[RMDB]
Chemical mapping of a 177-nucleotide RNA with DMS and 2A3. The RNA was probed in 150 mM KOAc, 10 mM MgCl2 and 150 mM bicine (pH 8.5) at 24 C. The DMS profile rests on 1,460 reads. The 2A3 profile rests on 653 reads. DMS adducts were read by reverse transcription with MarathonRT. Source: RMDB library OK1LIB, as collected in RNAgym.

RNA sequence: GGGAACGACUCGAGUAGAGUCGAAAAGGAGGUGGCAGAGUACAGUGGCUCUGAGGAGUGUCUGCCACACAGAGAGUGCUCUUUGCUGUUAUGAUGGGAUCAGAGGGACUGCGUAUGACUUGCUGAGAGGUGUUAAAUGCUUCGGCAUUUAACACCUAAAAGAAACAACAACAACAAC
Reactivity to DMS in 0.01 (KOAc 150mM, MgCl2 10mM, bicine 150mM(pH8.5), 24C), signal-to-noise 1, nucleotides 027 to 126: g020g000a050g030g030u010g000g050c010a020g000a070g000u040a020c160a090g010u020g020g000c000u000c000u000g000a150g030g000a010g020u000g000u050c020u000g000c000c020a000c000a070c060a030g000a120g040a290g000u030g000c060u000c000u020u000u060g000c030u000g000u080u000a060u000g000a080u000g010g000g000a100u010c040a110g000a100g000g000g070a230c030u000g000c090g000u000a070u000g000a100c010u020u010g000c000u060g030a060g000
Reactivity to 2A3 in 0.01 (KOAc 150mM, MgCl2 10mM, bicine 150mM(pH8.5), 24C), signal-to-noise 2, nucleotides 027 to 126: g080g020a100g160g010u040g020g040c020a010g000a000g040u130a180c040a050g040u100g130g000c000u010c010u050g130a170g050g090a010g000u030g110u000c000u000g000c000c000a000c000a000c040a010g180a000g000a000g050u090g040c000u000c000u180u100u080g020c020u050g030u170u070a080u180g110a040u080g000g000g000a020u080c020a020g070a120g010g030g010a010c030u050g010c040g070u020a120u090g080a100c050u120u020g030c010u050g020a070g000